Structure probing data (2A3 and DMS) for a 177-nucleotide construct.

[RMDB]
RNA sequence: GGGAACGACUCGAGUAGAGUCGAAAACUGAAAAUCCAAUUCCAGGUGAACUUUUAAAUGAAUUUAUUAAGAUAAAUGGAGUUUUAAAGGUUUCAGAAAAAUAAUUUGAUUUGUAUGGCUAUUGGCCGAGCACCUAAAUAUUCGUAUUUAGGUGCUCAAAAGAAACAACAACAACAAC
Reactivity to 2A3 in 0.01 (KOAc 150mM, MgCl2 10mM, bicine 150mM(pH8.5), 24C), signal-to-noise 1, nucleotides 027 to 126: c000u020g040a000a000a000a080u020c000c000a040a020u090u000c030c020a090g220g060u070g020a010a010c000u000u070u000u080a020a010a030u210g010a000a000u070u000u070a080u040u300a170a100g020a040u090a010a060a010u000g000g070a080g100u010u070u040u160a000a000a020g000g000u010u280u080c090a070g290a000a070a000a000a000u170a020a000u160u040u020g030a030u000u000u220g130u010a080u000g030g000c050u050a090u300u050g110g000c030c030
Reactivity to DMS in 0.01 (KOAc 150mM, MgCl2 10mM, bicine 150mM(pH8.5), 24C), signal-to-noise 1, nucleotides 027 to 126: c040u000g000a000a070a020a060u020c000c030a040a080u000u000c040c060a040g000g040u000g000a010a030c000u000u020u000u020a000a000a020u000g000a300a010u000u000u000a000u030u040a160a200g020a030u010a020a020a040u000g000g000a260g000u000u010u000u010a000a000a020g000g000u030u040u000c030a060g010a000a090a030a050a100u010a030a100u010u010u010g000a050u020u000u000g000u000a040u000g000g000c130u000a060u030u000g030g000c300c130
The RNA was probed in 150 mM KOAc, 10 mM MgCl2 and 150 mM bicine (pH 8.5) at 24 C. For DMS, 1,129 sequencing reads were counted. Reactivities are given for positions 27 through 126. For DMS the reverse transcriptase was MarathonRT.